[RMDB]
RNA sequence: GGGAACGACUCGAGUAGAGUCGAAAAGUGCGCCGCUAUUCAUCUAUCAUUCGUCUCGUGAGAGCGAGACUUAUCCCGGUACGGGAUCUCUCAUAGAUGGGAAAUCUUUCAUACUGCACGUUAGAAAGGGUUAACAUUUGUUCGCAAAUGUUAACCCAAAAGAAACAACAACAACAAC
Reactivity to 2A3 in 0.01 (KOAc 150mM, MgCl2 10mM, bicine 150mM(pH8.5), 24C), signal-to-noise 5, nucleotides 027 to 126: g040u080g010c030g010c010c010g000c060u090a110u070u080c010a010u000c020u020a030u020c040a130u130u160c080g010u010c020u000c000g000u010g040a070g000a000g030c010g000a000g000a000c000u030u040a030u020c000c010c000g050g110u200a190c090g020g000g000a010u000c030u010c000u000c030a010u000a020g010a020u020g010g000g030a010a060a060u050c040u030u100u040c020a020u040a150c010u090g010c020a000c030g050u060u050a080g060a090a100a040
Reactivity to DMS in 0.01 (KOAc 150mM, MgCl2 10mM, bicine 150mM(pH8.5), 24C), signal-to-noise 2, nucleotides 027 to 126: g000u020g000c030g020c080c010g010c100u000a120u000u050c010a050u000c060u000a030u000c070a190u010u050c230g000u000c000u010c030g000u000g000a210g000a190g000c000g000a010g030a040c020u000u000a040u010c000c000c010g000g020u010a090c020g000g000g000a010u000c120u000c090u000c120a080u000a090g000a030u000g040g050g020a050a030a080u000c070u050u000u000c010a060u010a090c030u010g000c080a000c050g000u020u000a080g000a080a120a220
This 177-nucleotide RNA was probed chemically with 2A3 and DMS.
2A3 adducts were read by reverse transcription with SuperScript II with manganese.
For 2A3, 3,603 sequencing reads were counted.
For DMS, 1,993 sequencing reads were counted.
The data come from the RNA Mapping Database (RMDB), library OK1LIB.